[RMDB]
RNA sequence: GGGAACGACUCGAGUAGAGUCGAAAAAAGGGCUGGUCAGUCCAGCAAAGGGUCAAUUACGGCUCUCUAUACCGUACUGGUCGAAGGGGACGAUAUGACCGAACCCGUGGCCGACGAAACACGUUCGUCAAGUACAGCUAUUCGUAGCUGUACUUGAAAAAGAAACAACAACAACAAC
Reactivity to 2A3 in 0.01 (KOAc 150mM, MgCl2 10mM, bicine 150mM(pH8.5), 24C), signal-to-noise 5, nucleotides 027 to 126: a000a000g110g030g000c030u030g000g020u070c080a090g070u040c000c000a000g010c000a060a070a000g100g000g000u040c030a050a110u210u090a140c060g000g000c000u000c000u000c020u080a070u070a240c010c040g010u060a130c100u220g000g010u020c020g100a180a080g030g000g010g000a000c010g030a040u040a120u290g080a070c040c010g020a020a020c000c010c000g000u110g010g000c020c030g010a010c030g030a050a060a020c110a010c100g110u110u080c010g020
Reactivity to DMS in 0.01 (KOAc 150mM, MgCl2 10mM, bicine 150mM(pH8.5), 24C), signal-to-noise 7, nucleotides 027 to 126: a080a070g020g010g010c030u010g010g010u010c170a150g010u010c020c000a050g000c070a080a090a100g010g000g010u000c010a090a120u010u000a110c080g010g000c030u000c050u000c110u010a150u000a080c070c000g010u010a080c200u010g020g010u000c060g020a110a180g010g010g000g000a160c020g000a110u010a130u010g000a050c040c010g010a080a130c020c020c010g000u000g000g000c050c020g010a040c040g010a090a070a070c160a080c120g010u000u000c070g010